[RMDB]
Chemical mapping of a 207-nucleotide RNA with 2A3. The data come from the RNA Mapping Database (RMDB), library M2RFPK. The 2A3 profile rests on 541 reads.

RNA sequence: GGGAACGACUCGAGUAGAGUCGAAAAAGGUGUGGAGCGACCUUAAACAGUUCUGGUGGUGCUCUGAAUGGAGUGCUCUACUGAGAUUUUAAAAUAGAAGGUAAGCUAUUAUCUCUUACAACAGGGCGAAGCACUCGGGGGUUCGCCCCCGAGUGAACGUGCAAGGAAAGUUCGCUUUCCUUGCACGAAAAGAAACAACAACAACAAC
Reactivity to 2A3 in 0.01 (KOAc 150mM, MgCl2 10mM, bicine 150mM(pH8.5), 24C), signal-to-noise 1, nucleotides 027 to 156: a020g010g050u040g010u050g020g000a000g010c000g020a010c000c000u080u150a040a040a010c010a030g000u020u000c010u040g020g050u080g080g010u070g020c010u010c010u110g060a100a080u170g010g010a020g000u040g000c000u110c090u050a040c040u010g080a040g030a070u090u030u200u260a140a160a030a030u140a080g040a080a000g070g000u060a040a000g030c010u000a010u150u060a110u100c000u000c020u040u070a070c040a110a030c000a040g010g000g010c020g010a070a030g010c000a000c000u000c000g000g000g000g000g000u020u020c070g030c050c000c020c000c000g010a000g010u000g000a000a000